[RMDB]
RNA sequence: GGGAACGACUCGAGUAGAGUCGAAAAAUAAAGUAGUCUCCUGCAGCGUCUGAGGAUUCCGUUGCAGUCCUCGGAACCAGGACCUCGGCGUGGCCUAGCGAGUUAUGGCGACGAAGGCCGUGAAAAACCCCAUAAUUAUGUUCGCAUAAUUAUGGGGAAAAGAAACAACAACAACAAC
Reactivity to DMS in 0.01 (KOAc 150mM, MgCl2 10mM, bicine 150mM(pH8.5), 24C), signal-to-noise 4, nucleotides 027 to 126: a100u010a080a070a120g010u010a070g000u000c060u000c000c010u000g010c170a160g010c140g010u000c000u000g010a010g020g010a030u000u000c070c210g020u010u000g020c140a070g000u000c010c010u000c000g010g020a030a020c050c010a040g000g000a040c210c000u000c030g020g020c050g010u000g020g000c010c010u000a200g000c020g000a110g000u000u000a090u020g000g000c020g010a070c060g010a110a070g010g000c020c020g010u000g000a060a080a080a080a110
Reactivity to 2A3 in 0.01 (KOAc 150mM, MgCl2 10mM, bicine 150mM(pH8.5), 24C), signal-to-noise 3, nucleotides 027 to 126: a000u190a000a060a020g110u080a020g040u050c020u010c050c000u030g060c090a100g020c010g070u000c010u030g020a000g010g020a010u060u000c050c100g210u170u210g000c080a010g010u010c000c000u010c000g000g000a010a000c020c000a010g010g010a000c000c010u040c050g050g020c020g020u020g030g000c010c010u040a020g050c040g040a020g030u090u150a140u260g120g000c010g000a100c010g020a100a010g030g000c010c010g010u050g000a130a040a010a030a060